This 207-nucleotide RNA was probed chemically with 2A3.
Reactivities are given for positions 27 through 156.
The RNA was probed in 150 mM KOAc, 10 mM MgCl2 and 150 mM bicine (pH 8.5) at 24 C.
[RMDB]
RNA sequence: GGGAACGACUCGAGUAGAGUCGAAAAAAGACAACUUCGCUGUAGCCGCUUAAGGCUUAAGCCUCGAAACUGCUUGUGUCCGUGCUCGCAGCGUAGAGUCAUCAUCACGGAACCGCUGAGACGUGGCCGUCUGCCCAUCCUCGGUUAAAUCUAGCAGGCAAGAAGCAAAGUUCGCUUUGCUUCUUGCAAAAGAAACAACAACAACAAC
Reactivity to 2A3 in 0.01 (KOAc 150mM, MgCl2 10mM, bicine 150mM(pH8.5), 24C), signal-to-noise 2, nucleotides 027 to 156: a000a000g080a030c060a170a080c100u170u120c070g010c000u050g030u050a010g000c000c020g060c250u300u220a180a050g000g000c000u010u040a000a000g000c000c000u040c010g090a080a020a020c000u010g000c000u000u030g010u020g010u090c000c020g000u050g000c000u030c000g000c000a020g000c010g000u000a000g020a030g140u010c030a140u100c000a020u090c000a010c020g010g000a010a010c000c000g000c040u050g000a010g000a040c010g040u090g000g040c020c050g110u020c030u050g000c000c010c010a010u020c000c010u000c000g000g000u020u060a000a010a060u050c080u140a000g010c000a000g050